[RMDB]
RNA sequence: GGGAACGACUCGAGUAGAGUCGAAAAACAGUAGCCUUACGAGGCUACUGAACUCUCUGCCUGUCAACGUCUCUGUACAGUGAACAUGAGGCAUGUGUAGAGAUUGUGUGACGGGUAGUGAGCCCAAACUGUAAUAGCUAUUCGUAGCUAUUACAGUAAAAGAAACAACAACAACAAC
Reactivity to 2A3 in 0.01 (KOAc 150mM, MgCl2 10mM, bicine 150mM(pH8.5), 24C), signal-to-noise 9, nucleotides 027 to 126: a000c000a000g000u000a000g000c010c000u060u020a090c300g110a020g000g000c000u000a000c000u000g000a010a010c000u000c000u000c000u000g000c000c000u010g000u000c000a000a000c000g000u000c000u000c000u000g020u020a010c010a130g110u030g170a220a050c070a220u290g090a160g180g040c040a080u020g000u000g000u010a000g000a000g000a020u120u300g060u040g040u020g040a000c000g000g000g000u000a000g000u000g000a000g000c000c000c000a080a050
Reactivity to DMS in 0.01 (KOAc 150mM, MgCl2 10mM, bicine 150mM(pH8.5), 24C), signal-to-noise 9, nucleotides 027 to 126: a100c000a010g010u000a000g000c000c000u000u010a120c170g020a040g010g010c000u000a000c000u000g000a020a100c010u000c000u000c000u000g000c010c000u010g010u000c010a050a010c010g000u000c000u000c000u000g010u000a010c010a030g010u010g010a050a050c080a190u020g010a180g010g010c010a030u000g000u000g010u000a010g000a020g000a020u000u020g040u010g020u000g000a010c010g010g010g020u000a000g010u000g000a010g000c010c000c000a080a100